The record gives the reactivity of an RNA of 170 nucleotides to 2A3 and DMS.
DMS adducts were read by reverse transcription with MarathonRT.
RNA sequence: GGGAACGACUCGAGUAGAGUCGAAAAGUGAAGUUACUAUUUAGGGCUUCAUUUUAUUUCAAAGAAUUUGCUACCCGCACUUUCACUGCUACCACUGCUGUAGGUAGUUGUAUAAAGAGUGUAGUGCCACGAUUGAAGUUCGCUUCAAUCAAAAGAAACAACAACAACAAC
Reactivity to 2A3 in 0.01 (KOAc 150mM, MgCl2 10mM, bicine 150mM(pH8.5), 24C), signal-to-noise 5, nucleotides 027 to 129: g010u010g000a000a000g010u070u050a300c030u100a180u230u300u300a070g010g000g000c000u000u000c010a000u000u010u010u030a130u010u130u050c060a050a060a030g140a100a150u130u100u170g040c030u070a100c000c010c010g060c010a010c010u070u150u110c020a010c010u040g010c010u030a000c000c030a030c050u120g050c070u170g140u190a080g080g000u000a010g010u000u030g050u020a140u080a050a130a020g160a010g000u000g000u010a010g010u010g020c030c030a100c110
Reactivity to DMS in 0.01 (KOAc 150mM, MgCl2 10mM, bicine 150mM(pH8.5), 24C), signal-to-noise 9, nucleotides 027 to 129: g030u010g020a000a000g000u000u010a170c000u000a190u070u090u110a060g000g000g000c010u000u010c010a010u000u000u000u000a070u020u030u000c030a060a110a140g030a090a070u010u030u030g000c040u050a060c030c030c040g000c050a010c000u020u030u020c040a000c020u030g020c010u020a020c000c020a080c070u000g040c180u040g030u060a040g040g030u000a010g000u000u040g030u020a100u050a070a080a040g030a030g020u000g010u010a040g010u000g000c080c140a080c150

The data come from the RNA Mapping Database (RMDB), library 15KLIB. Values cover nucleotides 27 to 129. For 2A3, 96,055 sequencing reads were counted. For 2A3 the reverse transcriptase was SuperScript II with manganese. The reactions ran in a buffer of 150 mM KOAc, 10 mM MgCl2 and 150 mM bicine (pH 8.5), at 24 C. The DMS profile rests on 105,108 reads.